[RMDB]
RNA sequence: GGGAACGACUCGAGUAGAGUCGAAAAACGCUGGUUGACAGGAUGAUUGUGAAACCUCGACACGCUGGUUGACAUUAAGGAUGACUGUGAAACAUCGACAUGCUGGUUGACAUUAAGAAUGAUUGUGAAACCUCGACACGGUGGUUGAGAUUAAGGAAGUAUAUCCACUAUUCGUAGUGGAUAUACUAAAAGAAACAACAACAACAAC
Reactivity to 2A3 in 0.01 (KOAc 150mM, MgCl2 10mM, bicine 150mM(pH8.5), 24C), signal-to-noise 4, nucleotides 027 to 156: a010c070g000c040u020g030g000u180u080g030a020c040a010g080g020a050u060g010a060u060u080g030u050g090a060a050a060c070c050u080c040g050a050c080a020c130g020c020u010g000g090u110u100g020a010c030a070u090u120a050a030g080g010a010u030g000a010c020u010g020u050g080a030a070a020c020a090u080c040g040a020c010a050u090g020c000u010g020g040u080u120g010a020c030a050u080u110a000a040g040a060a060u100g080a160u060u070g010u020g040a070a050a050c040c040u040c020g010a020c020a010c110g060g030u050g000g000u010u030g020a050g000a050u070u110a030a060g060g020a050
Reactivity to DMS in 0.01 (KOAc 150mM, MgCl2 10mM, bicine 150mM(pH8.5), 24C), signal-to-noise 4, nucleotides 027 to 156: a100c090g010c040u000g000g020u000u000g020a090c050a070g000g010a090u010g010a100u000u000g000u000g020a090a090a070c050c040u010c060g020a160c080a110c200g020c010u010g010g030u000u000g030a090c030a150u000u000a070a130g040g010a050u000g010a090c040u000g040u010g020a090a080a090c080a070u000c040g020a120c060a060u000g010c060u000g020g020u000u000g020a070c040a060u000u000a050a090g020a040a060u000g010a110u000u000g010u000g000a120a060a070c040c020u000c030g020a070c040a080c080g030g020u000g000g000u000u010g010a060g010a070u000u010a070a110g050g030a090